RNA sequence: GGGAACGACUCGAGUAGAGUCGAAAAUCACAUGUUGAGGUCGGAGAUUAGAUUCAAUUGGCAUGUGAGCUCGAUUGGUACAGGCUUGUCAGCCCAGGAUCCAAUCUUUUCUCCAGAAACCUACCGCGAGUGUAACUCGUUUCGACGAGUUAUAUUCAAAAGAAACAACAACAACAAC
Reactivity to 2A3 in 0.01 (KOAc 150mM, MgCl2 10mM, bicine 150mM(pH8.5), 24C), signal-to-noise 9, nucleotides 027 to 126: u030c000a010c000a030u050g010u020u070g080a040g020g040u060c040g050g030a070g010a100u040u100a050g080a140u090u050c040a060a110u080u040g010g000c010a020u020g020u020g030a010g000c030u060c080g060a070u040u100g040g010u090a060c040a060g020g030c000u090u140g180u270c080a000g010c010c010c010a030g050g070a040u040c020c010a000a010u000c000u000u010u000u000c010u000c000c000a020g140a160a110a050c010c020u050a060c020c050g080c070
Reactivity to DMS in 0.01 (KOAc 150mM, MgCl2 10mM, bicine 150mM(pH8.5), 24C), signal-to-noise 9, nucleotides 027 to 126: u000c020a040c050a040u000g010u000u000g010a060g010g010u000c100g010g010a080g010a090u010u000a060g010a090u000u000c110a100a150u000u000g000g000c020a030u000g010u000g000a020g010c140u010c110g000a090u000u000g010g010u000a110c120a160g000g000c010u000u010g010u000c190a070g010c010c000c100a160g000g000a100u010c050c050a020a010u000c000u000u000u000u000c010u000c010c080a160g000a080a080a050c050c040u000a100c080c070g010c270
Chemical mapping of a 177-nucleotide RNA with 2A3 and DMS. Source: RMDB library OK2TRN, as collected in RNAgym. The reactions ran in a buffer of 150 mM KOAc, 10 mM MgCl2 and 150 mM bicine (pH 8.5), at 24 C. For 2A3, 55,747 sequencing reads were counted.